[RMDB]
RNA sequence: GGGAACGACUCGAGUAGAGUCGAAAAUCAGCCUGAGCCCCAUAGAGGAGGUAAAAAAGGGAGCCACAUGUUCAGCCACGUUUGGGGUCUGGAGUGCAGGACCACAAGAGCCUGAUGUGAUGUGUCCAGACUGCACUUCCCACCUGGGCCCUGGGCAGUCCCAUUAAUACUUCGGUAUUAAUGGGACAAAAGAAACAACAACAACAAC
Reactivity to 2A3 in 0.01 (KOAc 150mM, MgCl2 10mM, bicine 150mM(pH8.5), 24C), signal-to-noise 2, nucleotides 027 to 156: u070c000a000g030c010c000u010g000a010g020c000c000c000c000a010u090a030g100a100g050g020a060g020g030u130a070a090a020a000a000a110g010g000g000a020g010c040c010a040c010a100u130g060u090u080c050a010g070c070c000a080c050g020u020u130u070g030g020g000g070u020c010u010g030g040a070g020u010g050c000a010g020g000a000c000c020a020c010a040a050g020a050g060c010c060u080g060a110u090g120u100g020a150u080g040u000g030u060c040c000a010g060a080c040u020g000c000a000c020u030u060c020c000c020a090c000c060u020g020g000g000c000c000c010u030g020g000g000c000a010